RNA sequence: GGGAACGACUCGAGUAGAGUCGAAAAGAUGGAACGUGGUAUUCCUGUGCCCGUGCAGUGGGUGGAGUGGGCAUCUGUCCCCUGCCCCAGGUAGUGCCCACCUCAGGGUCAGACCACUAGGGCUGAAACUAGGCACGGGAUUCGUCCCGUGCCUAGUAAAAGAAACAACAACAACAAC
Reactivity to DMS in 0.01 (KOAc 150mM, MgCl2 10mM, bicine 150mM(pH8.5), 24C), signal-to-noise 1, nucleotides 027 to 126: g000a080u020g010g000a050a070c130g020u010g000g010u000a150u010u000c070c000u000g010u000g020c010c000c000g010u040g010c140a080g000u000g020g000g060u000g000g000a110g010u000g070g000g020c020a050u010c070u000g010u000c040c040c020c140u000g030c000c020c010c070a110g010g020u000a070g000u000g000c030c000c010a040c060c050u000c040a070g000g020g040u020c110a070g000a100c000c010a040c080u000a150g000g000g000c010u010g010a160a080
An RNA of 177 nucleotides, treated with DMS and read out base by base.
The RNA was probed in 150 mM KOAc, 10 mM MgCl2 and 150 mM bicine (pH 8.5) at 24 C.
For DMS the reverse transcriptase was MarathonRT.